[RMDB]
An RNA of 177 nucleotides, treated with 2A3 and DMS and read out base by base. The DMS profile rests on 13,023 reads. For DMS the reverse transcriptase was MarathonRT. Values cover nucleotides 27 to 126. The reactions ran in a buffer of 150 mM KOAc, 10 mM MgCl2 and 150 mM bicine (pH 8.5), at 24 C. High 2A3 reactivity points to a flexible backbone, as in loops and unpaired stretches.

RNA sequence: GGGAACGACUCGAGUAGAGUCGAAAAAGAAAGAGCGUAUUCGCGUCUUGACGUGAAUGAGCCUAGACUGUAGGCUCUAGUGGGAUAGUAACGCUCACUGCCAAAACGCUAUUCCACAGUCAGUUAAUAUAGGUUAAUGGUUCGCCAUUAACCUAUAAAAAGAAACAACAACAACAAC
Reactivity to 2A3 in 0.01 (KOAc 150mM, MgCl2 10mM, bicine 150mM(pH8.5), 24C), signal-to-noise 4, nucleotides 027 to 126: a000g130a020a080a010g000a000g020c000g010u040a080u030u050c010g000c010g020u010c070u100u190g080a010c010g020u010g000a050a090u090g000a010g000c000c000u060a100g100a280c090u140g090u200a010g000g000c010u030c020u030a030g020u000g000g000g000a000u000a010g040u040a080a020c010g000c010u060c030a030c060u130g110c010c000a010a080a030a010c100g000c000u010a010u020u000c010c000a000c000a010g140u220c000a010g010u060u120a140a060
Reactivity to DMS in 0.01 (KOAc 150mM, MgCl2 10mM, bicine 150mM(pH8.5), 24C), signal-to-noise 7, nucleotides 027 to 126: a070g010a080a070a090g000a010g010c010g020u010a150u000u000c000g020c010g010u000c070u010u000g010a030c010g030u000g000a020a020u000g000a010g010c000c000u010a070g000a110c110u010g000u000a010g000g010c000u000c040u010a030g020u000g000g000g010a010u000a010g010u010a100a070c050g010c010u000c010a110c120u000g000c020c030a070a070a060a100c170g000c000u000a010u000u000c010c000a010c010a110g010u010c070a060g000u010u010a080a170